[RMDB]
RNA sequence: GGGAACGACUCGAGUAGAGUCGAAAAAUGCCGCAGCGGGGACGGGGGCCAGGCCAUGGCUGCUCAGAUACAUGGGCCCAUGAAAUUGAUGAACUGAGAGCUGCUUCCAGCCCUGCGCGCACCAUCUCUAUGUAGCUUAGUUCGCUAAGCUACAUAGAAAAGAAACAACAACAACAAC
Reactivity to DMS in 0.01 (KOAc 150mM, MgCl2 10mM, bicine 150mM(pH8.5), 24C), signal-to-noise 1, nucleotides 027 to 126: a100u010g020c060c050g020c020a050g120c020g000g000g000g010a030c090g010g030g000g000g010c070c170a040g000g010c080c030a060u000g000g000c130u010g020c010u000c000a030g000a220u000a160c230a100u010g020g020g010c030c010c000a030u020g010a080a060a090u010u020g010a230u000g040a100a070c120u000g000a100g030a130g010c050u010g020c030u010u000c020c020a150g000c020c010c020u000g020c000g010c010g030c020a060c040c030a070u030c090u000
Reactivity to 2A3 in 0.01 (KOAc 150mM, MgCl2 10mM, bicine 150mM(pH8.5), 24C), signal-to-noise 3, nucleotides 027 to 126: a000u090g070c060c030g000c040a050g010c050g020g010g000g020a030c020g000g000g000g030g000c010c020a030g030g000c020c000a030u010g010g000c030u050g010c000u000c000a020g020a080u250a160c110a130u030g010g010g000c000c010c020a000u030g070a040a090a030u300u260g050a140u100g050a120a070c070u090g050a020g030a030g200c040u020g010c000u020u000c010c000a030g000c000c000c010u010g000c000g000c010g000c010a040c010c000a080u040c010u010
Structure probing data (DMS and 2A3) for a 177-nucleotide construct.
Conditions: 150 mM KOAc, 10 mM MgCl2 and 150 mM bicine (pH 8.5), 24 C.
The DMS profile rests on 870 reads.
Source: RMDB library RFMREP, as collected in RNAgym.